The record gives the reactivity of an RNA of 207 nucleotides to DMS and 2A3.
The RNA was probed in 150 mM KOAc, 10 mM MgCl2 and 150 mM bicine (pH 8.5) at 24 C.
For 2A3 the reverse transcriptase was SuperScript II with manganese.

[RMDB]
RNA sequence: GGGAACGACUCGAGUAGAGUCGAAAAAAUAAUUGGCGAAACUCGUUUCGCGUUGGCUGCCUAAUUCAAGGAAUUAGCGUGCCUUCAUGCUAAGGGUUUGAUAUCUGCUAGAACCCGGUGCAUUCAUAAGACUUUUGCUUGUUCGCAAGCAAAAGAACGUUCAUAGAAUGUUCGCAUUCUAUGAACGAAAAGAAACAACAACAACAAC
Reactivity to DMS in 0.01 (KOAc 150mM, MgCl2 10mM, bicine 150mM(pH8.5), 24C), signal-to-noise 2, nucleotides 027 to 156: a130a130u000a050a100u010u000g030g020c000g020a190a150a070c000u000c100g000u010u000u000c020g030c030g050u000u000g010g000c040u010g020c210c010u000a040a000u000u000c020a140a110g050g000a040a050u000u010a040g010c020g010u000g000c000c000u020u000c030a070u010g020c020u000a300a250g000g000g030u000u000u020g000a240u010a050u000c120u000g010c050u020a300g000a020a050c000c010c000g000g020u000g020c030a060u000u000c050a110u000a060a140g010a140c020u000u000u000u000g010c000u000u000g030u000u000c300g030c000a060a050g010c000a000a000a000a000g020a050a110
Reactivity to 2A3 in 0.01 (KOAc 150mM, MgCl2 10mM, bicine 150mM(pH8.5), 24C), signal-to-noise 4, nucleotides 027 to 156: a000a010u260a020a070u070u070g020g010c010g010a010a010a040c040u030c090g040u000u000u010c010g000c010g000u010u020g000g010c020u060g030c020c040u000a010a000u030u040c120a250a130g150g020a080a000u000u000a010g030c070g050u050g000c020c000u000u030c040a020u010g000c010u020a020a040g010g000g020u010u010u000g040a040u050a120u130c140u190g030c040u040a050g040a000a000c010c000c000g000g020u040g000c010a020u080u110c050a040u070a190a130g060a140c000u000u000u000u000g000c010u010u000g010u080u040c130g010c120a000a010g010c000a000a000a010a000g010a010a010
Background
For 2A3, 3,878 sequencing reads were counted.